[RMDB]
RNA sequence: GGGAACGACUCGAGUAGAGUCGAAAACUGGCAGGGCUGGUAGCCUGGGUCCCUGCAGUCAUCCUAAGCUGCUGCACUCACCUGAUCCACCAGCAGCUGAGCCAGGCCAGGCUCGCUUGCGCGCAGCCGGGAAGUUAGCAUUCGUGCUAACUUCCCGAAAAGAAACAACAACAACAAC
Reactivity to DMS in 0.01 (KOAc 150mM, MgCl2 10mM, bicine 150mM(pH8.5), 24C), signal-to-noise 3, nucleotides 027 to 126: c010u010g020g040c010a060g000g010g010c250u020g020g030u010a100g020c050c020u000g010g000g000u010c090c030c020u020g000c010a040g000u000c080a170u020c050c060u020a100a080g000c050u000g010c010u000g010c090a140c100u000c070a090c130c120u010g000a090u010c060c030a090c300c020a020g010c010a030g030c010u010g000a070g000c040c020a040g030g020c030c100a060g000g000c010u000c040g020c030u010u000g000c150g000c050g010c120a060g020c040
Reactivity to 2A3 in 0.01 (KOAc 150mM, MgCl2 10mM, bicine 150mM(pH8.5), 24C), signal-to-noise 1, nucleotides 027 to 126: c020u020g180g010c010a020g000g020g030c030u110g040g130u090a020g020c010c000u010g020g000g010u090c070c000c000u000g020c000a010g030u060c030a080u070c020c020u040a090a010g030c020u010g010c010u000g000c040a020c030u100c040a170c040c050u140g040a090u090c070c010a030c010c010a030g020c000a000g000c000u020g020a020g050c010c010a020g030g000c040c010a030g000g000c000u010c020g000c030u090u160g030c070g030c000g000c070a020g030c000

Source: RMDB library OK2TST, as collected in RNAgym. An RNA of 177 nucleotides, treated with DMS and 2A3 and read out base by base. For 2A3 the reverse transcriptase was SuperScript II with manganese. Reactivities are given for positions 27 through 126. DMS adducts were read by reverse transcription with MarathonRT. For 2A3, 2,569 sequencing reads were counted. The DMS profile rests on 2,929 reads.